[RMDB]
The record gives the reactivity of an RNA of 207 nucleotides to DMS and 2A3.
RNA sequence: GGGAACGACUCGAGUAGAGUCGAAAAUGGUAGUGGGCGCCUGUAACCCAGCUACUCAGGAGGCUGAGACAGGAGAAUUGCUUGAACCCGGGAGGCGGAGGUUGCAGUAAGCUGAAAUCACGCUACUGCACUCCAUCCUGGGUGACAGAGCAAGACACUAGUAGUCAGGAUUCGUCCUGACUACUAGAAAAGAAACAACAACAACAAC
Reactivity to DMS in 0.01 (KOAc 150mM, MgCl2 10mM, bicine 150mM(pH8.5), 24C), signal-to-noise 1, nucleotides 027 to 156: u010g030g030u000a050g010u000g010g020g040c080g010c020c000u000g000u000a060a130c030c010c000a060g030c000u000a060c030u000c040a170g020g010a160g000g000c030u000g000a050g010a110c000a040g020g000a100g030a040a100u000u000g000c000u000u010g020a130a090c030c000c020g000g030g000a080g000g030c060g050g010a060g020g020u000u010g000c020a010g020u000a030a090g020c000u000g010a100a080a290u010c090a080c060g010c020u000a010c010u000g010c020a060c000u030c000c010a020u000c010c010u020g030g020g030u000g000a070c060a180g010a080g000c030a060a030g000a140c070a140
Reactivity to 2A3 in 0.01 (KOAc 150mM, MgCl2 10mM, bicine 150mM(pH8.5), 24C), signal-to-noise 3, nucleotides 027 to 156: u070g010g020u020a030g010u060g000g040g040c070g040c090c050u050g070u130a080a110c030c030c000a040g000c020u060a060c010u040c080a070g070g020a040g070g000c050u040g000a020g010a100c060a030g030g010a020g070a090a130u020u000g000c000u000u020g000a010a000c000c000c000g000g000g020a010g060g110c200g030g010a020g030g060u270u170g000c000a000g000u040a110a110g030c000u050g110a060a090a100u280c040a030c170g020c000u000a000c000u000g000c000a010c000u000c000c000a000u010c000c000u000g000g010g010u000g020a010c010a000g090a000g010c000a010a000g040a010c030a010
It was measured as part of the RMDB library OK3TST. For 2A3 the reverse transcriptase was SuperScript II with manganese. The RNA was probed in 150 mM KOAc, 10 mM MgCl2 and 150 mM bicine (pH 8.5) at 24 C. High 2A3 reactivity points to a flexible backbone, as in loops and unpaired stretches. DMS adducts were read by reverse transcription with MarathonRT.